This 177-nucleotide RNA was probed chemically with DMS and 2A3.
2A3 adducts were read by reverse transcription with SuperScript II with manganese.

RNA sequence: GGGAACGACUCGAGUAGAGUCGAAAAUAACAUUCUCUAUUUCGACUAGGCAAAUUUUGAGAGGCCCGAACCCGCUGCAAUAAUGAGCGUAGGAUGGAUGGAUGACCCGGGUGGGCAGCGCGGAUAACACUCAGUACAUCUUCGGAUGUACUGAGUGAAAAGAAACAACAACAACAAC
Reactivity to DMS in 0.01 (KOAc 150mM, MgCl2 10mM, bicine 150mM(pH8.5), 24C), signal-to-noise 2, nucleotides 027 to 126: u000a060a160c120a140u010u000c030u030c020u020a090u000u000u000c060g020a080c080u010a060g010g030c070a060a110a220u000u000u010u020g000a110g020a140g040g000c050c030c040g000a060a130c070c030c040g010c040u010g050c050a070a060u000a070a030u000g000a110g000c020g010u000a030g020g000a040u010g000g020a050u000g010g000a030u000g010a130c050c020c010g000g030g010u000g010g000g040c040a020g010c040g010c130g010g000a090u000a070a160
Reactivity to 2A3 in 0.01 (KOAc 150mM, MgCl2 10mM, bicine 150mM(pH8.5), 24C), signal-to-noise 1, nucleotides 027 to 126: u110a050a010c020a040u190u060c020u000c020u060a100u030u080u060c030g010a030c040u020a070g030g030c070a050a060a110u070u200u220u250g110a140g000a030g000g000c020c040c000g000a050a050c020c000c020g000c030u020g000c020a020a130u150a210a050u200g060a030g000c080g100u020a020g000g090a080u100g010g040a040u100g070g000a020u050g020a010c000c000c000g000g000g020u090g020g020g000c000a010g000c040g010c080g000g000a050u050a160a000

The DMS profile rests on 990 reads. For 2A3, 819 sequencing reads were counted. Source: RMDB library M2PK90, as collected in RNAgym.